[RMDB]
RNA sequence: GGGAACGACUCGAGUAGAGUCGAAAAGUCCAGCCGGUCACGCAGCGAGCUAUGCGGCGGACACGAGAACGGGUCAGCGAAGUGGUCGUCGGCGUGGAACCGUGCGAACGGUCGCAGCCACCAGGGCAGGCAUCUCUAUGUUCGCAUAGAGAUGCCUAAAAGAAACAACAACAACAAC
Reactivity to DMS in 0.01 (KOAc 150mM, MgCl2 10mM, bicine 150mM(pH8.5), 24C), signal-to-noise 1, nucleotides 027 to 126: g030u010c000c000a100g040c000c010g000g000u000c020a090c060g020c050a090g000c000g000a140g000c060u000a120u040g000c100g000g040c090g000g000a060c010a080c090g000a130g020a080a040c080g000g000g000u000c040a040g000c010g000a200a170g000u020g000g020u000c000g000u000c010g010g030c130g000u000g040g020a050a070c090c000g000u100g040c020g030a050a050c070g000g010u000c020g000c080a080g050c050c000a090c000c050a000g000g000g000c120
Reactivity to 2A3 in 0.01 (KOAc 150mM, MgCl2 10mM, bicine 150mM(pH8.5), 24C), signal-to-noise 3, nucleotides 027 to 126: g030u020c000c000a010g030c000c030g000g050u080c010a020c120g030c010a040g040c020g090a040g060c040u080a060u300g180c050g050g000c000g000g120a020c000a020c070g180a130g100a120a080c070g010g030g020u040c000a000g010c100g060a100a040g060u010g160g000u010c000g050u030c010g050g100c000g020u030g030g000a080a070c000c020g050u110g060c030g000a040a000c020g030g010u050c000g010c130a000g000c010c010a000c040c070a070g000g040g020c050
Structure probing data (DMS and 2A3) for a 177-nucleotide construct. Values cover nucleotides 27 to 126. Conditions: 150 mM KOAc, 10 mM MgCl2 and 150 mM bicine (pH 8.5), 24 C.